[RMDB]
This 207-nucleotide RNA was probed chemically with 2A3. For 2A3, 704 sequencing reads were counted. Conditions: 150 mM KOAc, 10 mM MgCl2 and 150 mM bicine (pH 8.5), 24 C. For 2A3 the reverse transcriptase was SuperScript II with manganese.
RNA sequence: GGGAACGACUCGAGUAGAGUCGAAAACAUCCACCGCCUUCGGGCGGUGGAUGAAAAGAAAUAUGUCUGACAAAAGAGUUACAUUGAUAGUGUAAAUAAUAGAGGUUCAAACCCUCUUAUUUCUACCAAAAGUGAGCGAUACUUCGGUAUCGCUCACCGGUUUAUGAAGAUUCGUCUUCAUAAACCGAAAAGAAACAACAACAACAAC
Reactivity to 2A3 in 0.01 (KOAc 150mM, MgCl2 10mM, bicine 150mM(pH8.5), 24C), signal-to-noise 1, nucleotides 027 to 156: c020a010u040c000c000a000c050c020g050c020c050u170u120c300g140g010g000c020g020g000u000g010g000a010u000g010a010a000a000a000g000a000a030a010u090a020u080g030u000c020u010g030a010c040a020a060a000a000g010a030g020u020u010a000c000a010u080u140g070a120u210a210g060u020g010u040a060a080a020u100a040a020u020a050g000a000g000g000u060u140c040a010a030a070c000c000c030u010c020u010u000a020u000u010u020c010u040a060c000c030a020a000a130a050g000u010g010a000g010c010g000a030u000a010c000u040u070c150g040g000u010a000u010c000g010c000u000c000a000c000